[RMDB]
RNA sequence: GGGAACGACUCGAGUAGAGUCGAAAAAGAGGGACUUAUAAACUUGCAAGCCAAGAUACCUUUGCUGACGGGGAGAUGACUUUAACCAUUCUUAGCAAUUCCAGCUCCCCCCAGCUGCUUCGUAUCCAGUUUGAUCUAGCUUCGGCUAGAUCAAACUAAAAGAAACAACAACAACAAC
Reactivity to DMS in 0.01 (KOAc 150mM, MgCl2 10mM, bicine 150mM(pH8.5), 24C), signal-to-noise 1, nucleotides 027 to 126: a020g030a000g000g000g000a190c050u030u050a240u050a060a110a060c060u030u000g000c010a140a100g010c170c040a040a070g000a090u030a070c010c060u060u000u000g000c020u000g000a000c300g000g000g050g000a010g000a080u000g000a060c120u000u000u000a120a070c140c090a160u030u010c000u000u000a010g010c140a060a190u000u030c000c030a100g000c010u000c000c000c000c000c050c080a070g000c010u000g000c060u000u040c050g020u020a120u000c030c150
Reactivity to 2A3 in 0.01 (KOAc 150mM, MgCl2 10mM, bicine 150mM(pH8.5), 24C), signal-to-noise 3, nucleotides 027 to 126: a000g070a060g000g000g020a050c050u170u100a090u170a180a090a020c060u050u030g010c090a110a000g080c100c010a020a000g010a060u180a100c020c040u110u080u150g000c000u000g000a050c000g000g000g060g000a020g010a010u070g110a070c020u280u150u170a070a010c050c010a090u200u140c080u090u100a040g050c030a040a090u220u000c040c020a010g020c000u010c000c000c000c000c000c070a000g000c000u050g000c010u010u080c080g110u030a090u040c000c000